[RMDB]
RNA sequence: GGGAACGACUCGAGUAGAGUCGAAAAUGUGGUCGUCGUGUUACUGGUGGGACGAACUGUAAGGUGGCGACUGCGCACUUCGUCUCCGGCGAGUGUUACGUUGUAAUACGUGGCACCGCUCUGUAAGUCAGCAAGUCCGAUGUCUCUGCGGUCACCAAUCUCUAAGUACCUUCGGGUACUUAGAGAUAAAAGAAACAACAACAACAAC
Reactivity to DMS in 0.01 (KOAc 150mM, MgCl2 10mM, bicine 150mM(pH8.5), 24C), signal-to-noise 3, nucleotides 027 to 156: u010g030u010g010g010u000c010g060u000c030g030u000g020u000u010a060c040u010g040g020u010g020g000g010a090c050g020a050a060c020u010g010u000a040a130g030g000u010g010g040c020g020a090c030u000g020c100g020c080a050c040u010u010c020g010u000c000u000c020c020g020g000c000g000a130g040u000g020u000u000a010c010g020u000u030g030u000a150a150u000a050c000g030u000g000g000c000a020c000c000g020c010u010c030u000g030u000a120a100g020u000c010a090g020c050a080a170g000u010c040c030g000a080u000g010u000c020u000c020u010g040c020g020g000u000c020a060c020c030a130
Reactivity to 2A3 in 0.01 (KOAc 150mM, MgCl2 10mM, bicine 150mM(pH8.5), 24C), signal-to-noise 5, nucleotides 027 to 156: u170g010u030g010g010u000c010g000u000c010g000u060g100u140u090a050c040u060g070g010u100g060g070g050a040c050g040a100a040c030u030g030u080a060a040g040g040u030g030g000c000g000a020c020u050g030c050g010c020a060c040u040u020c030g020u000c020u010c020c020g020g000c000g030a170g020u000g000u010u010a010c020g000u000u030g160u140a100a080u120a160c010g000u000g000g000c010a000c000c000g000c000u010c000u010g050u030a060a060g070u110c030a000g000c050a080a050g020u010c020c020g030a070u070g040u020c020u010c020u130g040c020g010g000u040c020a010c060c010a020